Conditions: 150 mM KOAc, 10 mM MgCl2 and 150 mM bicine (pH 8.5), 24 C. An RNA of 177 nucleotides, treated with DMS and 2A3 and read out base by base. DMS adducts were read by reverse transcription with MarathonRT. The DMS profile rests on 1,581 reads. Source: RMDB library TTRDEL, as collected in RNAgym.

[RMDB]
RNA sequence: GGGAACGACUCGAGUAGAGUCGAAAAGAUAUGGAGACACAGGAGAGGAUCCCUAUAUCGGAAACGAUAUAGAACUCUACCCACCUCCGAUGUCUCCUAAGUCAAAAUCGUCCGUUCGCGGACGAAAGUAUUCGUCUACGUUCGCGUAGACGAAUACAAAAGAAACAACAACAACAAC
Reactivity to DMS in 0.01 (KOAc 150mM, MgCl2 10mM, bicine 150mM(pH8.5), 24C), signal-to-noise 2, nucleotides 027 to 126: g010a010u000a190u020g020g000a020g000a030c010a010c260a300g000g000a040g030a170g010g010a040u000c210c120c010u000a010u000a000u010c000g010g000a060a050a070c000g020a000u000a020u000a000g000a040a060c150u000c090u000a070c050c030c120a270c120c000u000c000c020g000a130u000g010u000c000u010c000c000u000a000a000g000u000c060a100a060a060a090u010c030g000u000c010c000g010u000u010c220g020c010g020g000a010c000g010a000a020a040
Reactivity to 2A3 in 0.01 (KOAc 150mM, MgCl2 10mM, bicine 150mM(pH8.5), 24C), signal-to-noise 1, nucleotides 027 to 126: g010a000u050a010u090g000g000a010g000a000c030a010c030a100g000g060a130g030a070g070g160a080u050c000c000c010u020a010u000a000u000c000g020g000a040a010a010c020g000a000u000a000u000a000g030a000a010c090u050c090u300a190c060c040c060a150c040c000u000c010c000g040a090u020g010u010c000u000c000c000u000a040a000g000u030c000a020a020a010a290u110c000g000u000c020c000g020u050u050c300g030c000g110g000a000c000g010a030a010a000